[RMDB]
RNA sequence: GGGAACGACUCGAGUAGAGUCGAAAAAAAGAUAUGGACCCUCGACAUGUGUAUAACUUUGAUGACCAGCUUCGGAAACGAAGCUGCAAGAAGCAUAAGACACAACAGCGAGGGUCCUAAGUCAAAACAGACCGUUAUACUUCGGUAUAACGGUCUGAAAAGAAACAACAACAACAAC
Reactivity to DMS in 0.01 (KOAc 150mM, MgCl2 10mM, bicine 150mM(pH8.5), 24C), signal-to-noise 1, nucleotides 027 to 126: a030a060a030g000a080u000a300u000g000g000a000c000c000c000u000c000g030a030c120a240u020g030u000g000u000a050u000a200a120c050u030u000u000g000a030u030g020a140c300c000a000g000c000u000u000c000g000g000a090a070a300c020g000a020a020g000c000u020g000c000a060a020g000a000a000g000c110a030u020a120a270g000a020c000a000c000a030a120c140a290g000c000g000a000g020g000g000u000c000c000u000a000a030g000u000c060a030a100a180a190
Chemical mapping of a 177-nucleotide RNA with DMS. Reactivities are rounded to 0.1 and cut off at 0 and 3.